[RMDB]
Structure probing data (2A3 and DMS) for a 177-nucleotide construct. The reactions ran in a buffer of 150 mM KOAc, 10 mM MgCl2 and 150 mM bicine (pH 8.5), at 24 C. The data come from the RNA Mapping Database (RMDB), library OK2TST. For DMS, 924 sequencing reads were counted.
RNA sequence: GGGAACGACUCGAGUAGAGUCGAAAAAAAAGUGGAAGCAACCCAAUUGUCCAUCAACAGAUAAAUGGACAAGCACAAUGCAUUCUGCCCAUGCCAUGGGAUACUAUUUGGCCACAAAACGAAUGAAUGUUCAGAAUUGUUUCGACAAUUCUGAACAAAAAGAAACAACAACAACAAC
Reactivity to 2A3 in 0.01 (KOAc 150mM, MgCl2 10mM, bicine 150mM(pH8.5), 24C), signal-to-noise 2, nucleotides 027 to 126: a030a000a010a030g060u040g030g000a020a010g030c000a010a010c000c030c000a000a030u000u000g000u000c000c010a010u040c070a070a130c060a090g180a210u130a150a110a000u010g000g020a000c000a010a000g090c050a010c010a060a070u150g010c000a100u000u060c010u030g000c010c000c000a020u120g030c030c000a030u010g000g000g030a040u110a070c060u050a070u100u050u080g020g000c000c000a050c000a020a190a090a020c120g170a050a030u290g060a150a130
Reactivity to DMS in 0.01 (KOAc 150mM, MgCl2 10mM, bicine 150mM(pH8.5), 24C), signal-to-noise 2, nucleotides 027 to 126: a000a040a140a140g000u020g000g000a090a040g000c020a030a140c060c040c010a030a100u000u000g000u000c000c010a040u010c050a070a210c190a130g000a160u010a040a070a000u000g020g030a000c020a000a000g000c130a060c160a030a190u000g010c040a070u000u000c020u010g000c020c020c040a060u000g040c040c050a030u000g000g000g030a100u020a040c110u000a110u010u000u020g000g020c020c240a050c080a020a070a070a040c190g020a120a080u000g000a150a120